The record gives the reactivity of an RNA of 177 nucleotides to 2A3. The reactions ran in a buffer of 150 mM KOAc, 10 mM MgCl2 and 150 mM bicine (pH 8.5), at 24 C. Values cover nucleotides 27 to 126. For 2A3 the reverse transcriptase was SuperScript II with manganese. The 2A3 profile rests on 279 reads.
[RMDB]
RNA sequence: GGGAACGACUCGAGUAGAGUCGAAAACGAACUUGUAUGGUGCCAAAAUGAUACCAGACAAUGCAACAUUUAAAAAUUAUGCAUUCUUACUAUUCGAUGACAGUAGUCAAUACCUGACUUGGUAUAAGACCACACAGGCUUUCGAGCCUGUGUGGUCAAAAGAAACAACAACAACAAC
Reactivity to 2A3 in 0.01 (KOAc 150mM, MgCl2 10mM, bicine 150mM(pH8.5), 24C), signal-to-noise 2, nucleotides 027 to 126: c000g030a000a030c000u060u040g100u030a000u000g000g000u000g000c000c000a120a010a080a300u300g000a160u030a050c000c000a000g070a050c180a010a010u150g000c160a100a120c000a130u040u050u260a000a120a100a000a000u300u270a210u180g100c100a100u000u050c030u180u130a110c080u150a100u000u000c020g150a050u100g000a000c000a300g180u160a070g300u230c000a000a210u000a080c000c000u160g300a110c070u180u000g000g000u000a000u000a030a000